[RMDB]
RNA sequence: GGGAACGACUCGAGUAGAGUCGAAAACGAGUGAGGCUUAUCCCGGGGAUCGGCCUCUGUCCCUCCAUGGUGAGCUCCAGGACCCCCAAAAGGAGGGGGGUGGGCCUUGGACCUCCAGGAGCCAUGGCUAGAUUGCCCUUCGGGGCAAUCAAAAGAAACAACAACAACAAC
Reactivity to 2A3 in 0.01 (KOAc 150mM, MgCl2 10mM, bicine 150mM(pH8.5), 24C), signal-to-noise 2, nucleotides 027 to 129: c070g000a030g080u130g020a020g020g000c000u040u050a030u090c050c000c030g030g160g010g000a010u030c010g030g000c000c010u000c020u040g040u020c000c000c000u020c000c000a040u000g000g000u070g030a040g000c040u000c000c000a000g010g040a070c000c000c000c010c010a070a040a040a070g270g010a100g020g020g000g000g000g010u130g010g060g000c000c010u010u090g030g010a000c000c010u040c000c040a010g040g020a030g020c000c000a000u020g000g000c020u020a080
Reactivity to DMS in 0.01 (KOAc 150mM, MgCl2 10mM, bicine 150mM(pH8.5), 24C), signal-to-noise 4, nucleotides 027 to 129: c230g040a050g050u010g030a000g010g060c040u000u030a110u030c060c010c170g000g000g000g000a030u010c070g080g000c020c000u050c060u010g010u020c040c040c020u020c040c000a040u070g040g020u000g000a060g000c180u010c010c070a070g020g010a180c010c000c030c010c000a040a050a070a110g000g060a120g000g000g000g000g000g000u030g020g000g060c030c030u060u030g000g000a140c160c080u030c040c240a060g040g010a110g030c050c010a040u000g000g000c240u070a090

About this RNA:
This 170-nucleotide RNA was probed chemically with 2A3 and DMS. DMS adducts were read by reverse transcription with MarathonRT. Conditions: 150 mM KOAc, 10 mM MgCl2 and 150 mM bicine (pH 8.5), 24 C.